[RMDB]
RNA sequence: GGGAACGACUCGAGUAGAGUCGAAAAUAAAAAGGAGGACAUCAUGCCAACACUACAAGGUAAAACACAGUAACGAUUUGGCACGAUGUCAGCUCACGGACAAGUGUACAAAUUUAAUUCACUUGUCGUGCUUCCAUGUGUUCGCACAUGGAAGCACAAAAGAAACAACAACAACAAC
Reactivity to 2A3 in 0.01 (KOAc 150mM, MgCl2 10mM, bicine 150mM(pH8.5), 24C), signal-to-noise 2, nucleotides 027 to 126: u110a010a040a010a040a000g060g010a000g000g000a000c000a000u000c030a000u050g000c000c010a000a010c010a000c120u150a000c070a040a150g210g020u210a150a020a100a010c070a040c040a070g000u010a030a060c110g180a300u060u000u000g000g060c000a020c000g000a000u000g000u000c000a000g080c000u020c000a000c000g010g000a000c000a000a010g000u030g000u000a080c120a130a070a000u110u190u130a060a060u190u050c000a000c000u000u000g000u030c000

An RNA of 177 nucleotides, treated with 2A3 and read out base by base. Source: RMDB library RFM100, as collected in RNAgym.